Source: RMDB library OK2TST, as collected in RNAgym. The record gives the reactivity of an RNA of 177 nucleotides to 2A3 and DMS. 2A3 adducts were read by reverse transcription with SuperScript II with manganese. For DMS, 7,515 sequencing reads were counted. DMS adducts were read by reverse transcription with MarathonRT.
[RMDB]
RNA sequence: GGGAACGACUCGAGUAGAGUCGAAAAAUCUGGACGAACUGCGUCGGCGCGGGGCGUGUGGCGUGCAGCUUUCCACCACCGAGGAAAAUGUCGCCGCCGUGCACCUGUACCGCAAAGCCGGGUUCACCUCCAACCUUAAAUUCGUUUAAGGUUGGAGAAAAGAAACAACAACAACAAC
Reactivity to 2A3 in 0.01 (KOAc 150mM, MgCl2 10mM, bicine 150mM(pH8.5), 24C), signal-to-noise 6, nucleotides 027 to 126: a000u030c040u050g040g080a040c050g040a110a070c040u150g080c100g070u130c010g050g010c010g000c010g000g010g000g010c030g010u160g010u020g020g000c030g060u200g010c010a020g010c070u010u010u000c010c010a070c040c050a120c020c060g080a230g000g020a020a000a010a030u060g040u060c030g000c010c000g000c010c010g020u040g010c010a070c010c020u050g030u060a050c000c000g000c030a070a040a020g020c010c000g030g000g000u020u020c030a050c010
Reactivity to DMS in 0.01 (KOAc 150mM, MgCl2 10mM, bicine 150mM(pH8.5), 24C), signal-to-noise 6, nucleotides 027 to 126: a050u000c010u010g010g010a140c130g000a070a120c080u000g000c300g010u010c020g020g000c140g010c010g010g010g010g010c080g020u000g020u000g010g010c000g010u020g010c020a100g000c120u000u000u000c010c010a130c090c140a130c300c210g000a110g000g000a020a020a020a040u000g010u000c030g010c010c010g010c000c040g010u000g010c050a040c020c020u010g010u000a080c030c010g010c050a050a150a120g010c020c050g000g000g010u000u010c080a170c120